[RMDB]
RNA sequence: GGGAACGACUCGAGUAGAGUCGAAAAUACACCGAAAAGGAAAUAGGUGUCGUUGGUUGAGUGAGAAAGCAUUAAAUUAUUGAUAAAGUAGGCAACAAUGUCAGCAGAAUUACAAUUGCCGGCGGAGACUGGUGUAUCGUUUCGACGAUACACCAGUAAAAGAAACAACAACAACAAC
Reactivity to DMS in 0.01 (KOAc 150mM, MgCl2 10mM, bicine 150mM(pH8.5), 24C), signal-to-noise 3, nucleotides 027 to 126: u020a080c110a080c020c000g020a060a080a150a130g000g030a050a080a050u010a100g000g030u000g010u010c070g040u020u000g030g020u000u000g000a120g020u010g010a080g000a080a040a080g010c010a020u030u020a040a060a090u020u000a080u030u000g000a100u020a050a020a080g010u050a050g010g000c000a020a090c110a030a110u010g030u020c050a100g060c040a040g000a080a040u040u010a030c100a100a080u050u000g010c050c030g000g000c020g000g010a180g000
Reactivity to 2A3 in 0.01 (KOAc 150mM, MgCl2 10mM, bicine 150mM(pH8.5), 24C), signal-to-noise 1, nucleotides 027 to 126: u070a010c000a000c010c000g040a090a000a000a000g080g080a000a160a160u200a170g030g000u000g000u000c030g000u050u140g060g030u000u050g070a010g080u000g000a000g000a000a010a010g050c050a000u090u230a000a120a000u300u120a130u090u060g050a070u120a080a000a000g080u160a010g000g060c000a010a000c040a120a000u040g020u040c000a080g000c010a080g170a090a000u080u060a080c010a090a090u080u040g000c000c000g000g000c080g000g010a030g000